Overview
An RNA of 177 nucleotides, treated with 2A3 and DMS and read out base by base. 2A3 adducts were read by reverse transcription with SuperScript II with manganese. Conditions: 150 mM KOAc, 10 mM MgCl2 and 150 mM bicine (pH 8.5), 24 C. The data come from the RNA Mapping Database (RMDB), library M2PK90.

RNA sequence: GGGAACGACUCGAGUAGAGUCGAAAAAAGCAGGGUGUGAGAGAAACUCUCUCCCAGCCGGUUCGCGCAGCCACCCUUUUCGACUCUACUCGGGUUAGCUGCGCGAACUGGCUGGCGAUCCCCAGAACUGUCUAAAAUCAUUCGUGAUUUUAGACAGAAAAGAAACAACAACAACAAC
Reactivity to 2A3 in 0.01 (KOAc 150mM, MgCl2 10mM, bicine 150mM(pH8.5), 24C), signal-to-noise 2, nucleotides 027 to 126: a010a000g170c070a020g020g030g010u050g020u050g030a050g020a010g020a160a250a120c030u030c000u010c020u030c080c000c000a000g010c000c000g000g000u000u000c000g000c000g020c010a010g030c020c010a050c020c010c000u090u070u040u090c040g010a010c000u000c010u050a020c000u010c010g000g000g000u010u010a000g000c000u010g040c060g000c010g000a000a000c000u000g020g000c000u000g000g000c000g000a020u020c000c000c020c010a030g050a150a030
Reactivity to DMS in 0.01 (KOAc 150mM, MgCl2 10mM, bicine 150mM(pH8.5), 24C), signal-to-noise 3, nucleotides 027 to 126: a060a060g020c090a040g000g010g010u000g010u010g010a070g010a110g010a150a150a090c080u000c010u010c010u000c050c000c000a000g000c000c000g000g000u010u000c010g030c000g000c010a010g020c010c110a050c010c010c060u000u010u010u000c030g000a020c000u000c000u000a010c020u000c040g000g010g000u000u000a020g010c010u000g010c000g000c010g000a000a000c000u000g000g000c000u000g000g000c070g000a050u000c010c000c000c090a130g010a090a160